[RMDB]
RNA sequence: GGGAACGACUCGAGUAGAGUCGAAAAACAACAGAUAGCUGGAACCAGCGUAGAAUUCUACGCAUAUCCAUAGCGAAUGGUACCUGUAAAGAAAAUAAUGAGGAAUGUACAAGUACCAACAGUUCUCAAUGCCAUGGUGAUGUCAAUCACAUAUGCAGCAUCCUACUAGCUUCGGCUAGUAGGAUGCAAAAGAAACAACAACAACAAC
Reactivity to 2A3 in 0.01 (KOAc 150mM, MgCl2 10mM, bicine 150mM(pH8.5), 24C), signal-to-noise 1, nucleotides 027 to 156: a000c010a000a010c000a040g030a090u090a000g000c000u000g070g000a080a160c030c010a010g010c010g010u000a000g000a080a290u300u250c000u000a000c000g070c000a030u000a030u180c060c000a000u060a000g000c000g160a210a030u060g000g040u120a000c000c000u000g010u010a000a000a150g190a000a180a020a240u210a060a060u180g000a000g090g030a190a040u150g030u060a000c000a000a000g000u000a000c000c000a030a010c000a000g100u100u000c010u030c100a060a000u250g000c000c030a000u040g180g030u040g000a060u130g130u240c180a130a000u000c000a000c030a070u000a030u190g060c010a010
Notes: This 207-nucleotide RNA was probed chemically with 2A3. Values cover nucleotides 27 to 156. The RNA was probed in 150 mM KOAc, 10 mM MgCl2 and 150 mM bicine (pH 8.5) at 24 C. 2A3 is a SHAPE reagent: it acylates the 2'-hydroxyl of flexible nucleotides of all four kinds. It was measured as part of the RMDB library OK3TST. 2A3 adducts were read by reverse transcription with SuperScript II with manganese.